[RMDB]
RNA sequence: GGGAACGACUCGAGUAGAGUCGAAAAACAGCCUAGGUACGCCUAGGCUGAUCCAUUACACUACCCUGCCUCUUCUCUAUGAGAGGCAGCGGGGUGUAGUGGAUACGUGGCGAUACGUCGCCACGAAAUGCCUUCGUUGUUUCGACAACGAAGGCAUAAAAGAAACAACAACAACAAC
Reactivity to 2A3 in 0.01 (KOAc 150mM, MgCl2 10mM, bicine 150mM(pH8.5), 24C), signal-to-noise 4, nucleotides 027 to 126: a020c000a010g000c000c010u000a000g010g010u050a080c300g080c040c000u000a000g000g010c000u000g000a000u020c010c000a010u000u040a000c000a010c000u300a300c000c000c000u020g000c010c000u020c020u160u090c130u080c050u160a270u300g000a020g000a020g010g040c000a000g000c020g000g000g000g000u000g000u000a000g000u000g000g000a000u010a030c000g020u000g000g010c000g000a000u000a040c150g140u050c000g000c000c000a000c010g000a000a000
An RNA of 177 nucleotides, treated with 2A3 and read out base by base. For 2A3 the reverse transcriptase was SuperScript II with manganese. The RNA was probed in 150 mM KOAc, 10 mM MgCl2 and 150 mM bicine (pH 8.5) at 24 C. Reactivities are given for positions 27 through 126.